[RMDB]
RNA sequence: GGGAACGACUCGAGUAGAGUCGAAAAAAUAUUUUUAAUCAUUGGACAAUGCACAAUACCUUAAAUUUUGCUAAUAAUGUGUUUAGAUAUUGGGAUCGUGGUCUGGUUGAAUUAUAGGGUCCUAUGGGCCAAUUAAUGGAUUCGUCCAUUAAUUGGCAAAAGAAACAACAACAACAAC
Reactivity to 2A3 in 0.01 (KOAc 150mM, MgCl2 10mM, bicine 150mM(pH8.5), 24C), signal-to-noise 1, nucleotides 027 to 126: a000a010u070a120u060u030u000u000u040a070a030u100c000a040u030u080g000g000a000c020a030a020u180g000c040a030c050a150a000u030a140c020c060u100u160a070a070a150u000u120u120u160g000c010u030a030a050u180a250a170u200g070u030g020u030u210u070a100g000a070u090a030u090u020g000g000g000a080u050c000g040u030g020g030u000c050u090g000g030u000u100g020a020a000u230u030a110u100a110g250g060g070u030c030c050u040a080u080g080g090
Reactivity to DMS in 0.01 (KOAc 150mM, MgCl2 10mM, bicine 150mM(pH8.5), 24C), signal-to-noise 2, nucleotides 027 to 126: a070a020u010a010u020u000u000u020u010a050a070u000c000a080u010u000g000g020a050c060a090a050u000g010c070a090c050a030a010u000a050c070c040u000u020a010a050a040u000u000u000u020g010c080u010a100a110u000a080a050u010g010u000g000u000u000u000a010g010a030u000a040u000u000g000g000g020a060u010c060g010u000g010g010u020c020u000g010g010u000u000g010a020a030u010u000a040u000a050g010g020g000u000c010c020u000a060u010g020g020
About this RNA
This 177-nucleotide RNA was probed chemically with 2A3 and DMS. Reactivities are given for positions 27 through 126. For DMS, 2,265 sequencing reads were counted. 2A3 adducts were read by reverse transcription with SuperScript II with manganese. Conditions: 150 mM KOAc, 10 mM MgCl2 and 150 mM bicine (pH 8.5), 24 C. The data come from the RNA Mapping Database (RMDB), library OK2TST.